Record summary: Chemical mapping of a 177-nucleotide RNA with DMS and 2A3. High 2A3 reactivity points to a flexible backbone, as in loops and unpaired stretches.
RNA sequence: GGGAACGACUCGAGUAGAGUCGAAAACUCCGGCACCUUGCACGCAUCGGUGCUCCGAAAGCCCACACCCGACGCAUGAGCAAGUAAAUGCCGCACUGUAGCACCCUCGGGUCCGCAUGGAGUAUCGAGUUGUGACUGGUUUCGACCAGUCACAACUAAAAGAAACAACAACAACAAC
Reactivity to DMS in 0.01 (KOAc 150mM, MgCl2 10mM, bicine 150mM(pH8.5), 24C), signal-to-noise 2, nucleotides 027 to 126: c010u000c050c000g040g010c030a070c080c020u010u000g010c020a120c120g010c080a130u010c000g030g000u000g040c000u000c030c030g000a060a110a150g060c030c050c030a120c200a150c070c020c020g000a080c080g020c050a100u020g030a180g000c030a030a030g000u000a070a070a090u000g000c040c080g000c170a120c120u000g010u000a070g030c070a060c070c020c040u000c090g000g000g020u000c010c060g000c080a100u000g020g010a090g010u000a030u000c030g000
Reactivity to 2A3 in 0.01 (KOAc 150mM, MgCl2 10mM, bicine 150mM(pH8.5), 24C), signal-to-noise 1, nucleotides 027 to 126: c010u010c000c060g010g020c000a000c020c020u000u080g010c030a040c140g070c020a060u030c020g020g000u010g040c010u000c000c000g090a140a010a040g040c000c020c000a010c030a010c000c040c010g060a070c040g020c040a060u170g010a050g060c020a020a020g020u080a080a120a120u060g000c030c030g030c040a050c080u060g060u110a020g050c030a040c070c000c010u020c000g080g000g000u050c040c000g010c050a080u150g080g000a020g010u000a080u050c080g030
It was measured as part of the RMDB library OK2TST. For DMS, 1,030 sequencing reads were counted. Values are in units of 0.01, from 0 to 300, in steps of 10. The RNA was probed in 150 mM KOAc, 10 mM MgCl2 and 150 mM bicine (pH 8.5) at 24 C. Values cover nucleotides 27 to 126.